Structure probing data (DMS) for a 177-nucleotide construct. For DMS the reverse transcriptase was MarathonRT. Conditions: 150 mM KOAc, 10 mM MgCl2 and 150 mM bicine (pH 8.5), 24 C. Reactivities are rounded to 0.1 and cut off at 0 and 3.
[RMDB]
RNA sequence: GGGAACGACUCGAGUAGAGUCGAAAAGAUAUGGAAACGUAACAUCUACUUUAGCUGUGAACCCCUCGGAAACGAGGGGGGAGCUAUUGUAGUGGUUUCCUAAGUCGUGCUGGAGUUCGCUCCAGAAGACCAUUUACUUGUUCGCAAGUAAAUGGUCAAAAGAAACAACAACAACAAC
Reactivity to DMS in 0.01 (KOAc 150mM, MgCl2 10mM, bicine 150mM(pH8.5), 24C), signal-to-noise 4, nucleotides 027 to 126: g010a050u000a300u000g010g000a000a010a000c000g000u000a020a120c140a020u010c000u000a000c000u010u000u000a000g020c000u000g010u010g000a160a280c010c000c010c000u000c000g000g000a100a100a150c010g010a020g000g000g010g010g010g010a010g020c010u000a000u000u000g010u000a000g010u010g010g000u000u000u000c000c010u000a040a110g020u010c020g010u010g010c000u010g000g000a020g010u000u010c260g000c010u000c000c000a030g000a080a080
Source: RMDB library TTRDEL, as collected in RNAgym.